[RMDB]
RNA sequence: GGGAACGACUCGAGUAGAGUCGAAAAUGAGAGAAGUUAAAUAAUUUGCCCAAGUUCUUACAGCUAGGAAGCGUCAAAGUCUGAGAUUCCAGCCCUGGUUGGUUCAACAGCAACACUUGCUCUCAAUCACUCCAGUGUUGCUCACCACGGGGUGUUCCUCCUCUACAGGGUUCGCCCUGUAGAGGAGAAAAGAAACAACAACAACAAC
Reactivity to 2A3 in 0.01 (KOAc 150mM, MgCl2 10mM, bicine 150mM(pH8.5), 24C), signal-to-noise 1, nucleotides 027 to 156: u110g020a050g010a010g080a110a050g040u030u100a190a190a100u240a050a280u100u120u140g010c000c000c000a010a000g020u000u030c010u040u060a060c020a000g010c010u110a060g070g010a070a000g030c000g120u110c050a100a100a130g010u020c010u050g050a040g000a160u000u120c110c020a020g130c050c010c000u120g140g000u180u070g020g000u110u120c040a050a090c000a120g020c000a000a000c000a000c040u080u080g070c010u050c030u020c000a040a030u180c030a040c040u000c010c030a000g000u000g020u010u050g010c030u030c040a010c000c000a000c000g000g000g000g000u020g040u010u050c000